[RMDB]
RNA sequence: GGGAACGACUCGAGUAGAGUCGAAAAUUUGCCAGCGCUCGGUACAGCGCAAGACGAAUUGCUCGGUUGUUCGACGAUGCAAUUGGACAGAUCAACUCGAGAAUGCUGCGCAAAUGUCUGAUUGAAUAUGGCCUUGGUUGUCAUUGACAUGCAAACAAGGAGUAAACCGAUUCGUCGGUUUACUCCUAAAAGAAACAACAACAACAAC
Reactivity to DMS in 0.01 (KOAc 150mM, MgCl2 10mM, bicine 150mM(pH8.5), 24C), signal-to-noise 1, nucleotides 027 to 156: u000u000u000g090c050c020a300g000c000g000c000u000c060g020g080u000a250c150a240g000c000g000c150a090a100g020a070c020g000a030a030u000u000g010c030u040c030g000g050u010u000g060u020u000c020g010a120c090g000a130u000g000c000a020a040u000u000g050g000a180c010a200g000a150u000c020a040a080c040u000c000g000a190g000a080a050u000g000c020u000g030c040g000c050a050a050a120u020g020u000c020u000g030a160u010u000g040a160a160u000a050u000g020g040c020c020u000u000g020g000u000u000g030u010c000a110u020u010g030a250c080a080u000g030c020a090a030a100c130a170
Reactivity to 2A3 in 0.01 (KOAc 150mM, MgCl2 10mM, bicine 150mM(pH8.5), 24C), signal-to-noise 2, nucleotides 027 to 156: u020u000u030g000c000c000a000g000c020g020c010u010c020g020g010u150a120c060a120g090c120g000c070a010a000g020a010c050g020a030a110u030u050g020c040u040c010g040g020u120u010g090u210u160c050g000a040c000g010a020u240g000c040a020a070u060u070g090g000a050c090a110g030a060u050c020a060a000c020u080c100g000a000g010a070a040u110g000c000u030g000c040g000c020a020a020a020u010g090u000c000u090g050a130u070u050g040a040a080u060a060u070g070g000c060c090u160u090g090g010u090u120g100u040c030a000u050u120g010a000c010a080u090g070c050a020a070a030c020a060